[RMDB]
Structure probing data (DMS and 2A3) for a 177-nucleotide construct.
RNA sequence: GGGAACGACUCGAGUAGAGUCGAAAAGAUAUGGAUUCAGCUUUUGACGAGAAAGUGUCGGAAACGACACUUCGUCUCGAUAAGCUGAUCCUAAGUCAAAAGCGGAAAAACUUCGGUUUUUCCGCAACAGAUAACAUUUCUUCGGAAAUGUUAUCUGAAAAGAAACAACAACAACAAC
Reactivity to DMS in 0.01 (KOAc 150mM, MgCl2 10mM, bicine 150mM(pH8.5), 24C), signal-to-noise 6, nucleotides 027 to 126: g010a050u010a300u000g010g000a020u010u000c010a000g010c000u000u000u010u010g020a160c100g020a030g000a060a010a010g010u000g010u000c000g010g000a120a070a180c010g000a010c000a000c000u000u000c180g010u000c010u000c030g000a130u000a010a010g010c000u000g010a040u000c000c010u000a030a140g000u010c040a080a050a130a150g000c000g000g000a020a000a000a000a000c000u000u020c230g030g010u010u000u000u000u000c000c000g030c000a000a030
Reactivity to 2A3 in 0.01 (KOAc 150mM, MgCl2 10mM, bicine 150mM(pH8.5), 24C), signal-to-noise 4, nucleotides 027 to 126: g010a020u060a030u140g010g000a030u290u180c020a020g000c000u110u090u200u260g300a200c090g010a000g000a040a010a020g010u000g010u010c010g030g000a040a040a040c010g000a000c000a000c000u010u000c010g040u000c000u010c010g050a030u020a060a000g000c000u000g000a000u000c000c000u010a040a010g020u000c030a040a050a120a080g010c000g000g000a000a000a000a000a000c040u130u200c270g150g000u010u010u000u000u010c000c000g000c000a000a000
Source: RMDB library TTRDEL, as collected in RNAgym. High 2A3 reactivity points to a flexible backbone, as in loops and unpaired stretches. DMS adducts were read by reverse transcription with MarathonRT. 2A3 adducts were read by reverse transcription with SuperScript II with manganese.